[RMDB]
RNA sequence: GGGAACGACUCGAGUAGAGUCGAAAAACCUCUAAGUUCGCUUAGAGGUAAUGAACGCUGCAAAAAGCAGCGCGCACAGCGGAGCACGCAAAAGCAACGCAAGAACACCAUUCUUCGGAAUGGUGAAGUUGUCUACACUGUUCGCAGUGUAGACAACAAAAGAAACAACAACAACAAC
Reactivity to 2A3 in 0.01 (KOAc 150mM, MgCl2 10mM, bicine 150mM(pH8.5), 24C), signal-to-noise 1, nucleotides 027 to 126: a000c020c010u030c010u030a010a000g000u000u110c130g080c100u000u000a000g000a010g000g010u030a010a030u110g010a050a020c010g000c000u000g000c030a170a070a030a120a200g000c010a010g000c010g010c000g000c000a070c030a050g000c000g010g010a050g020c050a020c150g120c070a070a060a030a030g010c010a030a020c000g020c060a030a030g090a100a020c000a000c000c000a000u020u000c000u020u080c300g090g000a000a000u000g000g010u000g000a020a010
Reactivity to DMS in 0.01 (KOAc 150mM, MgCl2 10mM, bicine 150mM(pH8.5), 24C), signal-to-noise 1, nucleotides 027 to 126: a040c000c000u000c010u000a000a030g030u000u020c220g020c000u000u000a000g000a000g000g030u010a000a020u010g020a050a070c010g000c000u000g000c000a100a100a070a160a150g000c000a010g000c000g000c250g010c080a090c150a070g000c030g000g000a270g030c030a060c150g000c160a040a030a220a050g010c000a010a190c020g020c060a170a090g000a060a120c020a000c000c010a010u000u010c000u010u030c100g010g030a030a000u000g000g000u000g000a000a070